[RMDB]
RNA sequence: GGGAACGACUCGAGUAGAGUCGAAAAACUUGGAUAUGAACGGCCGAUUCAAAGUCGAGUCCAAGAAGGAUAUGCGCGAGAAGCGUAAGAUCAAGUCGCCGAACAUCGCUGAUUCGGUGAUCAUGUCCAGUCUAUCUUACUUCGGUAAGAUAGACUGAAAAGAAACAACAACAACAAC
Reactivity to 2A3 in 0.01 (KOAc 150mM, MgCl2 10mM, bicine 150mM(pH8.5), 24C), signal-to-noise 9, nucleotides 027 to 126: a010c010u020u020g010g000a020u050a070u220g130a160a050c040g040g000c020c030g140a180u130u190c120a120a100a030g010u010c010g020a030g020u000c010c000a010a020g050a030a020g070g000a020u040a020u100g010c020g000c010g010a100g110a300a030g020c000g010u010a030a100g020a030u040c030a030a020g030u000c010g000c010c000g010a010a010c020a060u210c110g070c280u130g040a300u020u000c000g000g000u020g010a010u040c020a050u100g050u040c020
Reactivity to DMS in 0.01 (KOAc 150mM, MgCl2 10mM, bicine 150mM(pH8.5), 24C), signal-to-noise 9, nucleotides 027 to 126: a080c020u010u000g010g010a020u000a070u010g010a090a150c120g010g000c020c020g000a090u010u000c290a120a110a130g010u000c010g010a260g010u010c000c020a050a070g000a090a110g010g000a040u000a030u000g010c000g010c000g000a150g010a120a160g000c010g010u000a020a090g000a020u000c030a080a180g000u000c010g020c040c030g000a020a010c050a070u010c210g000c210u000g000a130u000u000c000g010g010u000g010a030u000c080a050u000g000u000c070